An RNA of 207 nucleotides, treated with 2A3 and read out base by base.
Conditions: 150 mM KOAc, 10 mM MgCl2 and 150 mM bicine (pH 8.5), 24 C.
For 2A3, 505 sequencing reads were counted.
RNA sequence: GGGAACGACUCGAGUAGAGUCGAAAACAGCUACUCGGGAGGCUGAGGCUGGAGGAUCGCUUGAGCUCAGGAGUUCUGGGCUGCAGUGCGCUAUGCCGAUCGGGUGUCCGCACUAAGUUCGGCAUCAAUAUGGUGACCUCCCGGGAGCGGGGGACCACAAACUACCCUUCUUCGGAAGGGUAGUUUGAAAAGAAACAACAACAACAAC
Reactivity to 2A3 in 0.01 (KOAc 150mM, MgCl2 10mM, bicine 150mM(pH8.5), 24C), signal-to-noise 1, nucleotides 027 to 156: c060a040g000c000u140a190c000u080c010g010g000g000a010g020g010c140u110g040a010g060g050c000u070g020g020a110g030g070a070u100c010g040c000u010u170g090a000g000c000u010c000a020g030g020a300g140u300u150c010u000g000g000g000c000u080g050c010a020g030u010g090c000g000c040u040a020u050g000c010c010g060a070u030c020g040g000g000u020g000u000c080c110g050c010a010c000u070a150a060g040u060u060c020g000g000c020a020u040c010a060a200u060a110u290g130g000u170g010a140c010c000u000c000c000c000g020g000g000a020g020c040g050g020g000g010g000a020c020c020a070